RNA sequence: GGGAACGACUCGAGUAGAGUCGAAAAGAGCGAGAUACAGUGACCAGGAGUUCACUCUGCCUUGAGCUUCCGUCAGGUGAGCUCGGUGAGAUGGCCUGGUUGCUGAAGACGCCAUAUUCCGUCUCCCCCCACCCUGUAUCUUCGGAUACAGGGUGGGAAAAGAAACAACAACAACAAC
Reactivity to 2A3 in 0.01 (KOAc 150mM, MgCl2 10mM, bicine 150mM(pH8.5), 24C), signal-to-noise 4, nucleotides 027 to 126: g090a010g010c050g020a100g000a130u150a100c000a000g000u000g020a000c000c000a000g020g000a020g000u260u300c020a000c010u000c000u000g000c010c000u110u300g000a000g000c000u030u030c010c040g160u180c120a070g000g040u110g120a010g000c000u000c000g000g000u090g000a010g000a000u000g000g020c000c000u010g000g000u000u000g000c000u000g000a010a000g080a000c020g000c010c000a040u080a070u190u060c030c030g070u000c050u020c030c020c000
Structure probing data (2A3) for a 177-nucleotide construct. The RNA was probed in 150 mM KOAc, 10 mM MgCl2 and 150 mM bicine (pH 8.5) at 24 C. It was measured as part of the RMDB library RFM100.